[RMDB]
RNA sequence: GGGAACGACUCGAGUAGAGUCGAAAACUCGGUAUGCCAUGAACAGAACGUAACUAGAGGUAGAUGUUCCAUUGAGGCCUAAGAGCAGGUGGUGCAUGGCUGUAGUCAGAUAGUAUCGCGAGCUGAAAAAUAUAUCAUUAUUCGUAAUGAUAUAUUUAAAAGAAACAACAACAACAAC
Reactivity to DMS in 0.01 (KOAc 150mM, MgCl2 10mM, bicine 150mM(pH8.5), 24C), signal-to-noise 1, nucleotides 027 to 126: c010u010c010g020g000u000a300u030g010c020c020a000u000g020a080a220c080a070g000a030a080c050g010u010a030a050c060u020a090g000a050g010g010u000a040g010a100u030g010u000u000c010c020a140u050u000g010a100g020g000c010c010u010a100a100g020a100g030c010a070g000g010u020g000g000u000g000c000a100u010g000g000c000u000g000u000a290g030u000c180a200g000a300u000a030g020u000a200u030c020g010c060g000a080g000c020u000g010a020a070
Reactivity to 2A3 in 0.01 (KOAc 150mM, MgCl2 10mM, bicine 150mM(pH8.5), 24C), signal-to-noise 1, nucleotides 027 to 126: c010u020c010g020g070u160a070u140g010c010c020a060u060g050a080a040c020a040g020a040a010c000g030u020a010a010c040u090a030g030a010g090g040u030a010g020a060u050g010u030u000c000c000a020u010u090g040a040g050g000c020c000u080a110a010g040a020g000c000a010g020g040u060g030g020u080g000c000a030u040g000g000c000u010g020u070a030g000u000c000a000g010a200u130a060g100u050a060u070c020g010c020g020a030g000c040u050g030a010a110
Notes: An RNA of 177 nucleotides, treated with DMS and 2A3 and read out base by base. As a SHAPE reagent, 2A3 marks flexible, mostly unpaired nucleotides at the ribose 2'-OH. Conditions: 150 mM KOAc, 10 mM MgCl2 and 150 mM bicine (pH 8.5), 24 C. For DMS the reverse transcriptase was MarathonRT. For 2A3, 1,618 sequencing reads were counted. The DMS profile rests on 4,116 reads.